[RMDB]
RNA sequence: GGGAACGACUCGAGUAGAGUCGAAAAGCGUAGAGGAUAGGCGGGAGGCAUCGAUGCGGGGGCGCCAGCCCCCGCGGAGCCGCCCUUGGAAUACCGCCCUCGCCGCACCGGCGUCCUAACCCCGUCCUAAUUUUCUGUAAUUCGUUACAGAAAAUUAAAAAGAAACAACAACAACAAC
Reactivity to 2A3 in 0.01 (KOAc 150mM, MgCl2 10mM, bicine 150mM(pH8.5), 24C), signal-to-noise 2, nucleotides 027 to 126: g040c030g030u050a010g000a030g090g050a110u110a130g050g030c040g020g020g010a040g030g000c020a090u120c060g040a050u080g010c000g000g000g000g000g000c290g040c140c050a300g120c000c000c000c000c000g000c030g010g010a010g000c010c020g010c000c010c000u010u070g050g070a040a030u060a130c010c010g010c000c000c000u000c010g000c020c000g020c000a020c020c010g020g010c020g020u050c000c010u050a050a050c010c010c000c010g030u020c010c030